[RMDB]
RNA sequence: GGGAACGACUCGAGUAGAGUCGAAAAUCAGUGUUACCGCAGCAGCAUCAGGUAAAUGCAAAGAGGAGACCCCAAAGAUUCUAGACUCGGACACGACUGCCACAACAAAGACAGACAUAGAGGAGGAAACGGUAUAAGUGUUCGCACUUAUACCGUUAAAAGAAACAACAACAACAAC
Reactivity to 2A3 in 0.01 (KOAc 150mM, MgCl2 10mM, bicine 150mM(pH8.5), 24C), signal-to-noise 2, nucleotides 027 to 126: u070c020a010g030u020g010u110u020a070c030c030g060c020a010g030c010a000g000c000a020u000c010a060g120g050u060a070a060a080u070g010c010a060a080a030g060a040g010g040a070g040a050c000c010c010c040a060a110a000g050a050u080u160c050u080a040g000a080c010u000c010g030g010a010c020a000c030g080a040c030u050g000c030c000a010c010a140a000c020a010a060a020g050a030c040a030g010a020c000a020u120a010g010a040g070g020a020g000g030a070
Reactivity to DMS in 0.01 (KOAc 150mM, MgCl2 10mM, bicine 150mM(pH8.5), 24C), signal-to-noise 3, nucleotides 027 to 126: u010c090a090g000u000g000u010u000a080c050c030g050c060a050g000c040a090g000c020a050u000c080a090g010g010u010a050a050a040u010g010c060a050a090a110g020a130g010g020a100g000a080c060c020c020c030a060a070a130g000a120u010u000c050u000a140g000a110c050u000c040g030g010a070c080a060c110g010a060c030u010g000c020c010a020c070a060a040c070a060a050a060g000a050c070a060g000a060c050a040u000a080g020a040g000g020a080g020g000a110